[RMDB]
RNA sequence: GGGAACGACUCGAGUAGAGUCGAAAAGAGUUGCCCGCUAGGAAUAUUCAGAGCUAAUAUUGUGAAGGCCUCAAGUCUCUUGAACCUCGGGGGGUGGUUAUGUUUUGGUAGAUGGGGUCUAUGUACCUCGACUAAUACGGUUCGCCGUAUUAGUCGAAAAAGAAACAACAACAACAAC
Reactivity to DMS in 0.01 (KOAc 150mM, MgCl2 10mM, bicine 150mM(pH8.5), 24C), signal-to-noise 2, nucleotides 027 to 126: g000a140g030u000u010g010c050c000c050g000c080u010a120g000g000a090a080u000a100u000u000c050a140g020a070g000c110u000a050a070u000a070u000u000g030u020g000a130a120g010g030c040c060u000c030a080a090g000u010c020u000c030u010u000g000a090a120c070c020u000c070g020g000g000g010g000g000u010g000g010u000u020a070u000g010u000u000u000u000g010g010u000a060g000a080u000g000g000g010g030u000c030u030a090u000g020u010a040c030c020
Chemical mapping of a 177-nucleotide RNA with DMS.
It was measured as part of the RMDB library OK2TRN.
The reactions ran in a buffer of 150 mM KOAc, 10 mM MgCl2 and 150 mM bicine (pH 8.5), at 24 C.
For DMS, 1,748 sequencing reads were counted.
Values cover nucleotides 27 to 126.